[RMDB]
RNA sequence: GGGAACGACUCGAGUAGAGUCGAAAAUCGUAUUGACAUGUAGAAUGGGACUCUAUCUUUAUUCUCGUUUGAUUAGUUCUUUUCAAAUAGUUCUUUUCAAAAGAUCUAUCAGAACUACGAUGGAGUGAGUAUCAAUCACCUUCGGGUGAUUGAUACUAAAAGAAACAACAACAACAAC
Reactivity to DMS in 0.01 (KOAc 150mM, MgCl2 10mM, bicine 150mM(pH8.5), 24C), signal-to-noise 2, nucleotides 027 to 126: u010c090g010u010a120u000u000g010a110c110a050u010g020u010a070g000a060a020u000g020g000g000a040c150u020c130u000a040u010c010u000u000u010a060u030u000c000u000c100g010u000u000u000g000a100u000u010a030g000u000u000c010u000u000u010u010c220a060a090a030u000a030g000u000u000c060u000u000u000u030c300a050a050a040a020g000a010u000c010u010a000u000c110a050g010a060a040c080u000a040c070g000a050u000g000g000a090g030u000g000
Reactivity to 2A3 in 0.01 (KOAc 150mM, MgCl2 10mM, bicine 150mM(pH8.5), 24C), signal-to-noise 1, nucleotides 027 to 126: u070c000g050u080a070u050u230g070a050c000a040u070g070u140a060g090a110a030u000g020g010g030a000c030u070c000u160a070u050c000u020u260u100a180u160u030c010u000c030g090u040u080u150g050a060u050u020a020g040u020u000c000u020u070u030u000c100a060a080a000u030a040g000u020u090c000u120u030u000u120c130a160a090a000a000g000a000u040c020u000a020u120c040a000g000a030a030c020u010a010c050g020a000u050g090g010a080g040u070g020
The record gives the reactivity of an RNA of 177 nucleotides to DMS and 2A3. The 2A3 profile rests on 675 reads. For 2A3 the reverse transcriptase was SuperScript II with manganese. The RNA was probed in 150 mM KOAc, 10 mM MgCl2 and 150 mM bicine (pH 8.5) at 24 C.